[RMDB]
RNA sequence: GGGAACGACUCGAGUAGAGUCGAAAAAGUACUAUAUUUGGAUGUAAUAGAAAUGAAUUACCAAUAGAAUUAUGCGGAUUGCUUCAGGCAGAUUUACCUACUGUAGCCCUAGUAGGGUUAGAGUCGAGGCAUAAUUAGGAUUCGUCCUAAUUAUGCCAAAAGAAACAACAACAACAAC
Reactivity to DMS in 0.01 (KOAc 150mM, MgCl2 10mM, bicine 150mM(pH8.5), 24C), signal-to-noise 3, nucleotides 027 to 126: a070g010u000a090c040u010a080u010a060u000u010u000g010g000a160u000g020u000a050a040u000a080g000a110a060a110u010g010a190a070u000u000a070c020c030a060a070u000a070g000a090a050u000u000a040u000g010c020g000g010a080u010u010g000c090u000u010c070a040g000g020c030a030g010a080u010u000u000a110c080c000u010a040c000u000g010u000a030g000c000c020c000u010a110g010u010a150g000g030g000u000u000a040g000a030g010u010c140g000a130
Reactivity to 2A3 in 0.01 (KOAc 150mM, MgCl2 10mM, bicine 150mM(pH8.5), 24C), signal-to-noise 3, nucleotides 027 to 126: a000g030u040a010c020u040a040u100a190u130u080u070g060g030a050u100g020u140a080a060u060a130g100a100a110a110u120g050a060a030u120u020a090c000c000a030a040u060a070g040a010a070u100u080a030u130g040c060g040g050a020u040u100g030c000u080u060c030a030g010g010c010a020g020a080u030u050u060a050c010c000u000a000c000u050g040u080a020g010c020c000c010u050a120g120u130a010g060g010g010u000u030a040g000a020g030u070c080g070a040